[RMDB]
RNA sequence: GGGAACGACUCGAGUAGAGUCGAAAAGCGCGACCAGUGGGUAUCAUAACGCACAUCGACAUGGAUUAUGGGCGCACACACUGAAACUCGCACCCGUCAUCGACAGGCUGGCAGAUAGUUGGGUCGAACAGGGGCAUAUCCGUGAGUCCGACCGUGACAUGAUCCUCAAUUUCGAUUGAGGAUCAUGAAAAGAAACAACAACAACAAC
Reactivity to 2A3 in 0.01 (KOAc 150mM, MgCl2 10mM, bicine 150mM(pH8.5), 24C), signal-to-noise 2, nucleotides 027 to 156: g060c000g000c000g030a030c040c020a010g000u030g020g000g020u060a090u240c090a080u040a140a000c050g000c080a080c000a150u040c100g150a060c090a190u120g090g000a070u060u020a030u090g000g020g010c020g000c020a000c000a000c000a000c050u120g010a090a040a020c030u030c010g000c000a040c010c000c000g000u040c020a100u080c010g090a080c040a020g010g070c030u030g030g000c060a030g040a180u070a010g100u120u010g110g000g010u020c030g000a110a040c060a080g010g010g020g000c010a020u050a040u130c080c060g020u070g040a010g010u060c020c000g040a060c010c030g020u010g040a050
Reactivity to DMS in 0.01 (KOAc 150mM, MgCl2 10mM, bicine 150mM(pH8.5), 24C), signal-to-noise 1, nucleotides 027 to 156: g020c040g020c020g010a120c070c020a050g050u030g000g000g000u010a300u000c000a100u000a170a050c110g000c040a070c000a040u020c050g030a050c040a160u000g020g000a100u020u020a040u000g000g040g040c050g020c160a060c100a010c020a050c030u000g000a070a030a100c080u000c000g000c000a060c010c000c000g000u000c070a120u010c050g010a000c050a120g010g040c040u000g000g000c040a070g020a050u000a070g040u000u030g000g030g010u000c020g010a080a040c050a060g040g040g000g010c060a150u000a100u010c020c050g000u010g020a100g030u020c030c000g000a110c030c000g000u010g010a300